[RMDB]
RNA sequence: GGGAACGACUCGAGUAGAGUCGAAAAUCUCCGAUGUCCAAGACAUCAAAACAGCCUUGGCCAAAAUACACGAGGAUAAUCAGAAGAUAAUCUCCAAGCUAGAAUCAUUGCUGUUAUUGAAGGGAGACCUUCUUAAAGCCUUCGGGCUUUAAGAAGGAAAAGAAACAACAACAACAAC
Reactivity to DMS in 0.01 (KOAc 150mM, MgCl2 10mM, bicine 150mM(pH8.5), 24C), signal-to-noise 3, nucleotides 027 to 126: u020c010u020c010c130g030a020u040g000u000c020c140a120a200g000a100c020a020u000c020a020a040a140a070c070a060g000c020c000u000u000g010g010c110c040a060a080a100a110u070a100c120a150c160g010a060g030g050a050u050a070a080u060c050a040g020a220a080g020a030u000a100a040u000c030u000c020c050a080a110g020c180u030a050g000a160a090u010c060a050u000u040g010c000u000g000u000u000a080u030u010g000a050a120g010g020g000a080g000a050
Reactivity to 2A3 in 0.01 (KOAc 150mM, MgCl2 10mM, bicine 150mM(pH8.5), 24C), signal-to-noise 6, nucleotides 027 to 126: u020c050u000c000c040g030a050u040g010u020c040c070a100a050g030a020c010a050u070c000a050a060a010a060c040a010g030c000c020u060u090g030g000c040c030a120a130a030a040u220a080c090a010c050g080a080g020g020a050u090a090a100u080c050a030g090a230a020g020a140u080a130a120u080c020u000c060c000a070a000g040c040u080a050g080a100a060u100c030a070u030u150g000c000u010g030u050u060a150u060u090g040a070a030g090g010g000a050g030a010
Chemical mapping of a 177-nucleotide RNA with DMS and 2A3.
The 2A3 profile rests on 3,395 reads.
DMS adducts were read by reverse transcription with MarathonRT.
As a SHAPE reagent, 2A3 marks flexible, mostly unpaired nucleotides at the ribose 2'-OH.
Source: RMDB library OK1LIB, as collected in RNAgym.